Chemical mapping of a 207-nucleotide RNA with 2A3 and DMS. The reactions ran in a buffer of 150 mM KOAc, 10 mM MgCl2 and 150 mM bicine (pH 8.5), at 24 C. For 2A3 the reverse transcriptase was SuperScript II with manganese. For DMS, 7,009 sequencing reads were counted. The 2A3 profile rests on 13,903 reads.
RNA sequence: GGGAACGACUCGAGUAGAGUCGAAAACUCGUGUUCGCACGAGCUAAUUCCUAAGUCAGAUCGGUUAUGCUGACAGACAUGCUUAUCGGAAACGAUAAGCAACAGCUGUCAGAACUACAUAUCGAUCUGAUAUGGAUACGCCGGGGUUCGCCCCGAACAUGAAUAGUAACUUCGGUUACUAUUCAUGAAAAGAAACAACAACAACAAC
Reactivity to 2A3 in 0.01 (KOAc 150mM, MgCl2 10mM, bicine 150mM(pH8.5), 24C), signal-to-noise 8, nucleotides 027 to 156: c010u000c000g010u010g030u060u090c300g010c100a010c010g010a000g000c000u050a100a120u090u030c000c000u020a170a010g010u010c000a000g000a000u000c000g060g030u160u130a020u040g010c000u000g000a000c000a000g020a030c060a060u050g000c000u000u010a000u000c010g040g030a090a050a070c000g000a010u000a010a000g030c000a010a000c020a010g050c000u000g000u010c000a000g000a020a030c050u150a030c040a030u030a000u020c000g000a000u000c000u000g000a000u000a010u020g000g000a040u080a140c120g090c150c020g040g010g000g020u060u090c180g170c010c000c000c000g000a030a010
Reactivity to DMS in 0.01 (KOAc 150mM, MgCl2 10mM, bicine 150mM(pH8.5), 24C), signal-to-noise 3, nucleotides 027 to 156: c000u000c000g020u000g010u000u000c280g060c000a030c000g010a000g050c010u000a070a170u000u000c000c000u010a090a300g010u000c000a020g000a010u000c000g030g020u000u010a070u000g000c000u010g030a030c000a020g010a060c040a300u010g000c000u000u010a000u000c000g040g010a230a150a250c010g010a010u000a000a010g020c030a000a020c080a120g010c010u000g010u010c010a120g000a050a180c030u000a150c050a030u000a010u000c000g010a030u000c000u000g000a000u000a060u000g010g000a160u000a050c150g020c120c040g000g000g050g000u000u000c100g020c000c020c010c000g020a060a150